RNA sequence: GGGAACGACUCGAGUAGAGUCGAAAAGCUAUUGUUGGAAUCACCGUACCAAUUUAGGUUUACGCUCCAAGAUCGGUGGAUAGCAGCCCUAUCAAUAUCUAGGAGAACUGUGCUAUGUUUAGAAGAUUAAAUCGACGCAUCUUCGGAUGCGUCGAAAGAGUAUAUACACGUUCGCGUGUAUAUACUCAAAAGAAACAACAACAACAAC
Reactivity to 2A3 in 0.01 (KOAc 150mM, MgCl2 10mM, bicine 150mM(pH8.5), 24C), signal-to-noise 2, nucleotides 027 to 156: g010c020u010a010u080u160g160u110u220g100g100a050a020u090c000a000c020c000g010u010a010c010c040a030a060u120u100u120a150g010g000u010u130u040a010c030g020c020u000c000c000a000a030g010a070u040c010g030g000u000g000g010a010u000a010g000c040a030g020c010c000c010u020a030u080c090a080a050u060a010u240c000u040a020g000g030a030g020a080a050c060u120g020u060g070c040u140a070u180g050u040u080u070a060g040a170a010g030a150u160u160a150a110a120u040c000g000a000c000g010c000a000u030c040u050u000c070g010g010a000u020g000c020g000u010c000g000a000a000a000
Reactivity to DMS in 0.01 (KOAc 150mM, MgCl2 10mM, bicine 150mM(pH8.5), 24C), signal-to-noise 1, nucleotides 027 to 156: g040c040u000a020u000u000g020u000u030g020g000a150a240u010c010a140c020c030g000u000a270c000c020a050a120u000u010u000a100g020g010u010u000u000a130c090g000c030u000c000c000a110a120g000a050u020c070g000g020u000g010g010a050u000a020g020c010a250g030c120c080c010u000a110u010c060a060a040u000a130u010c090u000a160g000g000a060g020a030a120c050u000g000u000g010c040u000a130u000g000u000u010u000a140g030a100a110g050a190u000u010a070a060a170u000c000g030a030c010g020c000a000u000c050u000u000c300g040g020a010u000g020c000g010u000c000g000a000a000a130